[RMDB]
RNA sequence: GGGAACGACUCGAGUAGAGUCGAAAAGGGUUGUCAUCCUCAAGUUUCUUGAGCUUCUUGUUGGUUCGCCGGAGAUCCUUCUCGAGAAUUCGCCUUUUCUUCCUUUCUUCCACCCACUGCUCGAGGAUUAGCCGCUCCUUCGGGAGCGGCAAAAGAAACAACAACAACAAC
Reactivity to 2A3 in 0.01 (KOAc 150mM, MgCl2 10mM, bicine 150mM(pH8.5), 24C), signal-to-noise 2, nucleotides 027 to 129: g090g040g000u080u050g000u100c020a110u060c020c040u040c010a010a010g000u000u060u060c000u030u020g000a000g000c030u110u020c010u010u160g050u050u130g000g000u020u020c080g000c010c050g130g000a020g000a000u060c050c000u040u040c020u030c000g060a030g000a020a060u120u060c030g170c000c000u040u050u000u000c020u010u030c000c000u030u010u080c020u040u050c000c000a000c000c000c010a050c030u000g000c000u000c010g030a030g000g000a050u060u060a010
Reactivity to DMS in 0.01 (KOAc 150mM, MgCl2 10mM, bicine 150mM(pH8.5), 24C), signal-to-noise 2, nucleotides 027 to 129: g000g020g000u000u000g020u100c090a120u040c040c000u000c070a070a220g130u000u120u000c000u000u000g030a280g080c050u000u000c000u010u040g050u040u020g010g020u020u020c040g040c000c060g040g010a130g100a050u000c000c090u080u030c000u000c070g020a080g000a100a060u070u000c070g000c060c060u100u000u000u050c010u000u000c000c000u030u000u010c050u090u000c040c070a100c000c000c100a040c060u050g020c050u090c020g000a040g060g050a040u000u040a140